[RMDB]
RNA sequence: GGGAACGACUCGAGUAGAGUCGAAAAAAUUUCUAGGAAACUAGCAGGUGGCCAACCGCCCGGGCCACCGUUACUGCACUCCACUCCUAAGGGACUGGUUUGGAGGAACAUAACAGGGCAAAUGAAAUCAACAUAACUGAUUCGUCAGUUAUGUUGAAAAAGAAACAACAACAACAAC
Reactivity to 2A3 in 0.01 (KOAc 150mM, MgCl2 10mM, bicine 150mM(pH8.5), 24C), signal-to-noise 3, nucleotides 027 to 126: a020a010u160u120u020c030u040a050g000g040a110a060a060c000u010a030g030c100a180g050g020u000g000g000c010c010a030a030c070c120g000c000c020c000g000g000g000c010c000a000c000c000g000u000u030a020c010u020g100c010a000c010u000c000c000a010c000u010c000c010u050a110a230g140g010g010a020c030u020g000g000u010u000u010g050g060a000g000g020a010a010c020a060u210a090a030c040a060g000g010g000c000a040a000a030u120g010a010a040a040
Reactivity to DMS in 0.01 (KOAc 150mM, MgCl2 10mM, bicine 150mM(pH8.5), 24C), signal-to-noise 4, nucleotides 027 to 126: a080a080u020u000u010c010u010a020g000g000a180a110a150c010u000a030g000c300a110g020g010u000g000g010c000c020a060a090c140c180g000c010c000c000g000g000g000c000c000a000c010c000g000u010u000a020c020u000g000c020a030c010u000c000c010a000c180u000c000c000u010a120a130g040g010g020a030c120u000g000g000u000u000u010g010g010a020g000g000a020a010c030a070u010a070a080c160a040g010g010g060c010a070a080a070u010g000a120a090a080